About this RNA: The record gives the reactivity of an RNA of 177 nucleotides to 2A3 and DMS. For DMS the reverse transcriptase was MarathonRT. The RNA was probed in 150 mM KOAc, 10 mM MgCl2 and 150 mM bicine (pH 8.5) at 24 C.
RNA sequence: GGGAACGACUCGAGUAGAGUCGAAAAUCGUAGGCGGCCUCGGUGGCCGCGAUCGCCGGGGCGUUUUGGCCCAGCAGGUUCGAGACCACCAGCGACACGAACAGUGCCCGGUUGGCCGAGAUGAUCGGACUCCUCGUUAGUUCGCUAACGAGGAGUCAAAAGAAACAACAACAACAAC
Reactivity to 2A3 in 0.01 (KOAc 150mM, MgCl2 10mM, bicine 150mM(pH8.5), 24C), signal-to-noise 2, nucleotides 027 to 126: u120c030g040u110a070g100g120c000g000g030c010c010u040c110g050g040u120g010g000c010c000g000c010g000a000u000c000g020c000c000g030g000g020g000c110g020u070u080u140u150g140g000c030c020c000a040g050c050a030g000g020u020u060c000g000a050g010a140c010c000a020c010c000a020g010c050g090a020c000a000c090g110a300a000c140a060g020u050g140c000c040c010g010g030u080u120g100g000c000c050g030a020g000a090u120g010a000u110c050g080
Reactivity to DMS in 0.01 (KOAc 150mM, MgCl2 10mM, bicine 150mM(pH8.5), 24C), signal-to-noise 1, nucleotides 027 to 126: u050c010g000u030a060g010g000c040g050g020c000c000u020c250g000g090u030g010g010c010c020g070c000g000a010u000c020g000c000c050g000g000g000g050c070g000u010u000u040u000g030g030c010c000c050a070g000c140a070g030g040u000u010c020g000a060g000a070c010c000a110c070c020a060g040c000g000a130c070a000c000g000a180a160c060a140g000u010g040c010c030c070g010g000u000u000g000g070c070c040g020a090g000a160u000g000a070u010c100g010